RNA sequence: GGGAACGACUCGAGUAGAGUCGAAAAGAUAUGGAUCCGCUGUGGGAGCCUAUCGGUCGGAAACGACCGUAAGGGCGACGAUCACACGGAUCCUAAGUCAAAACCAUUAUGCUUCGGCAUAAUGGAACGUUAAUCUUUGGUUCGCCAAAGAUUAACGAAAAGAAACAACAACAACAAC
Reactivity to DMS in 0.01 (KOAc 150mM, MgCl2 10mM, bicine 150mM(pH8.5), 24C), signal-to-noise 4, nucleotides 027 to 126: g010a020u000a050u010g010g010a000u000c010c000g010c300u000g020u000g010g000g010a020g030c000c020u030a160u010c010g010g000u000c010g020g010a020a000a030c000g020a000c000c000g020u000a060a140g020g020g040c000g030a070c300g020a030u010c000a010c010a070c000g010g010a000u000c000c000u000a010a060g000u010c000a110a080a120a200c010c000a010u000u000a010u000g010c000u010u010c210g050g000c000a010u000a010a000u000g000g000a050a070
Reactivity to 2A3 in 0.01 (KOAc 150mM, MgCl2 10mM, bicine 150mM(pH8.5), 24C), signal-to-noise 3, nucleotides 027 to 126: g000a000u000a000u060g000g000a000u000c000c030g040c300u060g000u000g000g000g030a040g000c000c000u030a100u130c010g010g000u000c020g000g000a020a000a010c010g000a000c000c000g010u020a240a300g090g000g030c010g030a160c020g010a000u000c000a000c000a000c010g000g000a000u000c000c000u000a000a000g000u000c020a020a010a090a240c000c000a000u000u000a010u000g000c010u050u120c300g200g000c010a010u000a000a010u010g010g010a040a000